[RMDB]
RNA sequence: GGGAACGACUCGAGUAGAGUCGAAAAGGAGUGGCAACAGCAUAUACUUUGGGAAUGAUGCUUUCUGGACAAAAUUAUCAAUUAGUUUCUGGAAUAAUUAGAGGAUAUUUGCCUGGACAAGCUGUAGCAUGGCCGUUUAAUUCGUUAAACGGCCAUGAAAAGAAACAACAACAACAAC
Reactivity to 2A3 in 0.01 (KOAc 150mM, MgCl2 10mM, bicine 150mM(pH8.5), 24C), signal-to-noise 1, nucleotides 027 to 126: g010g010a030g010u020g010g010c030a050a000c010a060g030c040a010u100a010u030a100c050u110u050u100g020g030g020a140a080u120g070a030u050g070c000u040u020u020c020u030g000g000a040c000a000a100a030a040u150u040a080u080c030a040a060u040u030a030g050u000u060u040c100u130g060g100a080a100u070a040a000u060u050a050g040a030g010g030a010u050a090u140u050u050g000c000c000u020g040g000a020c050a050a030g070c020u020g000u160a010g060